Conditions: 150 mM KOAc, 10 mM MgCl2 and 150 mM bicine (pH 8.5), 24 C. This 207-nucleotide RNA was probed chemically with 2A3 and DMS. 2A3 adducts were read by reverse transcription with SuperScript II with manganese. The 2A3 profile rests on 2,900 reads.

RNA sequence: GGGAACGACUCGAGUAGAGUCGAAAAUUUGCGGAAAUCGAGAUAGCGGCAUCGCGGGCAGACCCGACGACGAUCUCGACUGCGAUCCGGCACUCGGUCUAUUCAAAGCGUUCGUCGCCAGCGAGUUUGUGGUCGAUCAAUUGUGCAUAAGUACGUACAUUAGUCAUAACUUCGGUUAUGACUAAUGAAAAGAAACAACAACAACAAC
Reactivity to 2A3 in 0.01 (KOAc 150mM, MgCl2 10mM, bicine 150mM(pH8.5), 24C), signal-to-noise 5, nucleotides 027 to 156: u060u050u090g030c030g040g040a070a060a090u040c010g000a020g030a050u110a150g150c040g020g040c080a040u030c020g010c000g000g020g000c070a030g040a190c020c050c050g090a130c060g030a030c040g030a060u010c000u000c010g120a160c020u010g020c020g020a030u030c030c000g080g010c030a010c050u000c030g010g010u000c050u110a110u090u120c080a090a050a030g010c040g030u020u050c050g050u060c020g040c060c040a030g050c030g050a040g030u010u100u140g050u080g030g000u010c020g040a050u030c020a110a150u070u130g050u040g020c030a030u060a200a030g090u120a050c080g060u070a010
Reactivity to DMS in 0.01 (KOAc 150mM, MgCl2 10mM, bicine 150mM(pH8.5), 24C), signal-to-noise 4, nucleotides 027 to 156: u000u000u020g020c030g020g010a060a060a060u000c010g000a030g010a080u000a090g020c020g000g040c060a040u000c020g020c050g040g000g010c060a160g000a130c010c010c040g020a090c090g020a100c080g000a090u000c010u000c050g010a020c010u000g010c040g010a050u000c010c000g070g030c080a200c030u000c020g020g030u000c020u000a100u010u010c050a060a060a050g000c020g010u010u000c040g010u000c020g020c040c030a110g000c030g000a100g030u000u000u010g030u000g020g030u000c020g020a110u000c070a040a120u000u010g020u000g020c030a130u010a030a120g030u000a040c050g010u010a170